[RMDB]
RNA sequence: GGGAACGACUCGAGUAGAGUCGAAAACUUGCCUAGCCUCGCCCCAUCCCGCCGACUCCUGCUGGUGCACGCGAUCAUGACCCUUGUGAUGCCGUAUGUAACCCGCAAGGUGCAACGCAAGGUACUGCCUUGUUUCCUGAUUCGUCAGGAAACAAGGAAAAGAAACAACAACAACAAC
Reactivity to DMS in 0.01 (KOAc 150mM, MgCl2 10mM, bicine 150mM(pH8.5), 24C), signal-to-noise 3, nucleotides 027 to 126: c140u000u000g000c010c000u010a110g000c020c000u000c080g010c040c010c020c040a110u000c010c020c050g040c050c050g010a070c070u000c030c030u010g010c040u000g000g010u000g010c040a040c040g020c040g000a080u000c040a100u000g000a140c120c020c020u000u000g020u010g000a090u010g010c050c060g010u010a050u000g000u020a060a110c010c030c030g020c090a040a110g000g020u010g010c030a060a070c060g010c020a050a040g020g020u000a090c130u000g010
Reactivity to 2A3 in 0.01 (KOAc 150mM, MgCl2 10mM, bicine 150mM(pH8.5), 24C), signal-to-noise 2, nucleotides 027 to 126: c000u050u150g010c020c010u030a060g000c030c010u030c020g030c010c000c000c000a030u020c030c000c010g010c030c020g050a050c040u000c010c010u060g050c040u050g010g080u040g020c000a000c040g060c030g030a050u070c020a050u110g150a110c010c010c000u050u040g010u000g040a030u040g020c040c040g030u090a090u100g070u020a140a120c020c020c000g040c030a030a040g060g050u070g040c020a030a030c010g000c050a050a010g070g000u080a120c040u090g030
The record gives the reactivity of an RNA of 177 nucleotides to DMS and 2A3. Conditions: 150 mM KOAc, 10 mM MgCl2 and 150 mM bicine (pH 8.5), 24 C. 2A3 adducts were read by reverse transcription with SuperScript II with manganese. Values cover nucleotides 27 to 126.